About this RNA
An RNA of 177 nucleotides, treated with DMS and 2A3 and read out base by base. The 2A3 profile rests on 1,969 reads. DMS adducts were read by reverse transcription with MarathonRT. For DMS, 1,302 sequencing reads were counted. The data come from the RNA Mapping Database (RMDB), library TTRDEL.
RNA sequence: GGGAACGACUCGAGUAGAGUCGAAAAGAUAUGGAUGGUCCAUAAAGCUUGGACCUCGGAAACGAGCUAGCUUCGUGGCCAUCCUAAGUCACAGAUGUAGUAGUGCCUUCGGGCACUACUACAUCAACGUCUGUCUGAUGUUCGCAUCAGACAGACGAAAAGAAACAACAACAACAAC
Reactivity to DMS in 0.01 (KOAc 150mM, MgCl2 10mM, bicine 150mM(pH8.5), 24C), signal-to-noise 2, nucleotides 027 to 126: g000a060u010a300u010g000g000a020u000g000g000u000c000c000a010u000a030a030a020g010c010u000u010g040g000a140c300c010u010c010g000g010a100a090a130c010g010a000g030c020u010a000g020c000u020u000c050g030u000g010g000c010c000a010u010c000c000u000a010a060g010u000c030a070c260a110g030a010u000g030u010a000g000u000a000g020u000g010c000c000u010u020c170g050g010g020c000a000c000u010a000c020u000a000c010a020u000c000a080a110
Reactivity to 2A3 in 0.01 (KOAc 150mM, MgCl2 10mM, bicine 150mM(pH8.5), 24C), signal-to-noise 1, nucleotides 027 to 126: g010a040u120a030u140g000g000a000u010g000g060u190c060c000a000u000a020a060a000g040c020u160u160g200g080a250c100c010u000c000g000g040a070a050a050c000g010a000g040c000u010a010g000c000u000u000c040g030u030g000g000c000c000a000u060c010c000u000a070a010g010u020c010a030c060a270g020a000u000g000u000a000g000u000a000g010u010g040c040c000u050u120c300g020g000g020c000a000c000u000a010c030u000a010c010a000u000c010a000a000